[RMDB]
RNA sequence: GGGAACGACUCGAGUAGAGUCGAAAAGAUAUGGACAUAUAACAGCGAAGAACUCAUUUCGGAAACGAAAUGAGGGGAGCUGAUAUGUCCUAAGUCAAAGAUACCGUAGGUUCGCCUACGGUAUCAAGUAUUACGGGAAGUUCGCUUCCCGUAAUACAAAAGAAACAACAACAACAAC
Reactivity to DMS in 0.01 (KOAc 150mM, MgCl2 10mM, bicine 150mM(pH8.5), 24C), signal-to-noise 4, nucleotides 027 to 126: g010a010u000a000u020g010g000a010c010a010u000a000u010a130a210c040a010g010c000g020a080a130g000a050a300c000u000c000a010u000u000u000c010g020g010a020a010a010c000g010a000a010a010u000g000a020g010g010g000g010a020g020c010u000g020a030u000a000u000g010u000c000c000u000a000a050g000u000c000a120a130a110g000a000u000a000c000c000g000u000a000g010g000u000u000c280g020c000c000u000a000c000g000g010u000a000u000c000a050a090
Reactivity to 2A3 in 0.01 (KOAc 150mM, MgCl2 10mM, bicine 150mM(pH8.5), 24C), signal-to-noise 5, nucleotides 027 to 126: g000a000u020a010u050g010g000a000c010a000u050a010u070a300a210c010a150g040c020g260a300a010g010a030a020c000u000c000a010u010u010u000c000g000g000a000a000a000c000g000a000a000a000u010g010a000g000g000g010g010a020g000c000u000g010a000u010a000u020g010u000c000c000u000a000a000g000u000c020a170a050a090g000a000u010a000c000c010g000u000a000g020g080u050u090c300g160c050c000u000a010c000g000g000u000a000u000c000a000a000